[RMDB]
RNA sequence: GGGAACGACUCGAGUAGAGUCGAAAAGAAGCUCAUAGAUGCAUGCCGAGAGCGCAUUUUCUCUCGUAAAUCAAAUUUGCAUAUUUUAGUCGCAAACGACGAAUCUUACGCUCUAGCUGCCUAAGGGCAGCUUGUCCGCUUCACUGAAUACUUGUGGCCUUCAAUACAUCUUCGGAUGUAUUGAAGGAAAAGAAACAACAACAACAAC
Reactivity to DMS in 0.01 (KOAc 150mM, MgCl2 10mM, bicine 150mM(pH8.5), 24C), signal-to-noise 1, nucleotides 027 to 156: g020a070a110g060c030u020c060a130u000a120g020a070u010g000c050a100u000g060c110c020g030a040g020a050g010c130g000c010a070u000u000u010u000c020u010c000u000c030g000u000a070a080a080u000c110a070a050a080u000u000u020g010c040a300u010a050u010u010u000u000a200g040u000c080g060c060a110a110a130c020g010a040c030g000a010a070u000c070u000u000a030c030g020c030u000c010u000a020g000c000u020g000c000c000u000a080a070g060g000g000c000a020g010c000u000u000g010u000c000c010g000c030u000u010c050a060c050u000g030a100a100u000a060c060u000u040g050u000g010g000
Reactivity to 2A3 in 0.01 (KOAc 150mM, MgCl2 10mM, bicine 150mM(pH8.5), 24C), signal-to-noise 4, nucleotides 027 to 156: g070a030a010g030c010u030c070a090u080a140g090a030u100g060c030a030u100g020c010c000g010a000g000a000g000c040g000c020a000u010u020u020u060c010u000c000u000c020g120u210a020a010a040u060c030a000a010a040u050u020u010g000c020a020u020a200u140u170u040u090a070g030u040c050g040c140a130a170a130c070g060a010c010g000a030a040u070c050u100u130a020c060g000c000u020c000u030a000g000c000u000g000c010c020u060a070a120g050g000g000c000a010g000c000u000u010g000u000c000c010g040c050u090u050c040a030c080u110g050a160a060u120a180c060u090u140g020u050g060g030
This 207-nucleotide RNA was probed chemically with DMS and 2A3.
2A3 adducts were read by reverse transcription with SuperScript II with manganese.
Conditions: 150 mM KOAc, 10 mM MgCl2 and 150 mM bicine (pH 8.5), 24 C.
DMS (dimethyl sulfate) methylates the pairing face of unpaired adenines and cytosines.